[RMDB]
The data come from the RNA Mapping Database (RMDB), library OK3TST. Structure probing data (DMS and 2A3) for a 207-nucleotide construct. For 2A3, 818 sequencing reads were counted.
RNA sequence: GGGAACGACUCGAGUAGAGUCGAAAACAUCACUACCAUCCACCUCCAGAACUUUCUUCAUCUUCCCAAACUGAAACUCUAUACCCAUUAAACAACACUAGUGGCAGUUUUUGCUUAUUAUUCUUAGCUUUGUGACCAAGGCUGCUAGUUAGGAGAAACUAUCGCUCCUUUUCGAAGGAGCGAUAGUAAAAGAAACAACAACAACAAC
Reactivity to DMS in 0.01 (KOAc 150mM, MgCl2 10mM, bicine 150mM(pH8.5), 24C), signal-to-noise 1, nucleotides 027 to 156: c050a130u000c000a120c030u020a040c050c020a130u000c000c020a070c060c000u020c010c040a080g010a060a050c040u000u000u000c060u040u010c020a130u000c050u000u000c000c020c010a050a130a140c110u000g000a070a070a040c040u020c000u010a120u010a170c020c020c030a170u020u000a070a070a110c100a080a100c060a130c050u000a060g010u000g030g060c030a070g000u000u000u000u000u000g020c020u000u020a120u000u000a090u000u000c010u020u000a020g000c030u000u000u000g040u000g020a040c020c000a040a180g120g030c020u000g050c000u000a050g000u020u000a040g000g010a130g000a180a120
Reactivity to 2A3 in 0.01 (KOAc 150mM, MgCl2 10mM, bicine 150mM(pH8.5), 24C), signal-to-noise 2, nucleotides 027 to 156: c000a020u100c020a000c040u110a060c040c000a070u030c000c000a020c000c000u000c020c000a060g010a110a040c020u040u030u000c000u030u030c010a130u020c020u060u060c030c020c000a060a010a060c010u020g000a100a020a000c020u060c040u060a060u100a180c000c040c000a050u140u150a160a070a040c030a040a050c030a040c040u000a030g030u020g010g020c010a010g010u030u000u010u020u130g030c040u070u050a080u080u050a100u130u190c110u080u020a050g050c020u030u080u110g080u110g030a030c070c000a060a010g060g000c010u000g000c020u000a000g010u040u010a040g000g030a040g040a010a130
Reactivities are given for positions 27 through 156. DMS adducts were read by reverse transcription with MarathonRT. For 2A3 the reverse transcriptase was SuperScript II with manganese. Conditions: 150 mM KOAc, 10 mM MgCl2 and 150 mM bicine (pH 8.5), 24 C.